[RMDB]
RNA sequence: GGGAACGACUCGAGUAGAGUCGAAAACUAACUGACAAAAUAGACCUUCACCUGAGGGCCUCAUUAUGCUUUCUGCCUGUGCAUCAGGCCAAAAAUACCUCCACAAUACCUGCUCGACAUCCUGGGCUUCCAAGUGACAAACAAAUAAUUGGGUGAACAUUUAUUAUUACUUCGGUAAUAAUAAAUGAAAAGAAACAACAACAACAAC
Reactivity to DMS in 0.01 (KOAc 150mM, MgCl2 10mM, bicine 150mM(pH8.5), 24C), signal-to-noise 1, nucleotides 027 to 156: c050u000a040a130c030u000g030a180c110a070a090a160a120u010a120g000a010c010c020u000u000c010a190c120c070u020g000a120g050g000g040c060c000u000c070a100u020u000a110u030g010c010u000u010u000c030u010g000c020c050u000g070u000g020c070a140u000c030a040g060g070c020c020a010a040a050a100a050u000a050c030c000u000c010c000a060c030a100a130u020a030c070c000u000g010c050u000c050g020a060c080a010u000c000c000u000g020g020g000c060u000u000c010c020a050a080g000u010g000a100c080a100a030a090c050a050a020a030u000a050a050u000u000g000g020g030u000g000a050a160
Reactivity to 2A3 in 0.01 (KOAc 150mM, MgCl2 10mM, bicine 150mM(pH8.5), 24C), signal-to-noise 3, nucleotides 027 to 156: c010u030a060a030c040u080g100a050c070a040a170a060a100u140a130g070a120c000c010u040u020c060a110c030c070u040g030a030g000g060g000c010c030u040c050a070u060u140a050u140g010c030u100u130u100c050u050g030c020c000u040g020u060g080c020a080u090c030a120g040g000c010c000a040a110a040a010a020u090a120c010c010u030c030c010a050c050a070a030u040a140c010c010u010g000c000u030c020g020a030c000a020u020c000c010u030g000g040g000c000u040u000c040c010a080a010g040u030g050a040c030a040a140a010c020a030a100a060u150a050a070u190u080g030g000g020u090g030a040a000